[RMDB]
RNA sequence: GGGAACGACUCGAGUAGAGUCGAAAAUGCUGUCGUUGACAGCGCCCAACGCUUCACAACCUGAAAGAAGCGCUUGUUAUCAGGACGGUUGAUCCAUUUACCGGUGCAGACCUCUGCAAACACCGGGUUUAACAAGCAUCUUUCGAGAUGCUUGUAAUCCACUCUAUCUAUUCGUAGAUAGAGUGGAAAAAGAAACAACAACAACAAC
Reactivity to DMS in 0.01 (KOAc 150mM, MgCl2 10mM, bicine 150mM(pH8.5), 24C), signal-to-noise 3, nucleotides 027 to 156: u010g010c010u000g020u010c000g050u000u000g030a060c020a030g000c020g050c050c050c000a050a060c020g010c020u000u000c000a180c100a050a190c060c010u010g000a160a180a180g010a010a000g020c010g020c000u000u000g020u000u000a120u010c080a070g030g030a180c120g010g030u000u020g010a140u010c060c050a230u000u000u010a110c010c000g020g010u000g000c010a110g000a240c150c130u020c110u020g000c050a220a140a040c020a020c000c000g010g010g010u000u000u000a060a050c000a010a050g000c000a010u000c000u000u000u000c270g020a030g030a010u000g000c000u000u000g010u000a040a130
Reactivity to 2A3 in 0.01 (KOAc 150mM, MgCl2 10mM, bicine 150mM(pH8.5), 24C), signal-to-noise 4, nucleotides 027 to 156: u110g000c020u010g020u040c090g270u070u300g020a000c000a000g000c000g040c000c000c000a050a050c000g010c000u000u010c040a070c060a190a130c040c050u070g020a060a050a030g000a020a000g000c000g010c010u020u070g050u190u090a170u240c050a020g060g010a020c060g040g010u020u040g020a140u050c040c010a030u040u090u140a080c000c000g000g000u010g000c020a020g080a240c030c120u160c040u180g030c030a070a090a000c040a010c010c000g010g010g010u080u150u040a020a000c000a000a000g000c000a000u000c000u020u060u060c050g070a030g010a010u000g000c000u000u000g000u010a000a040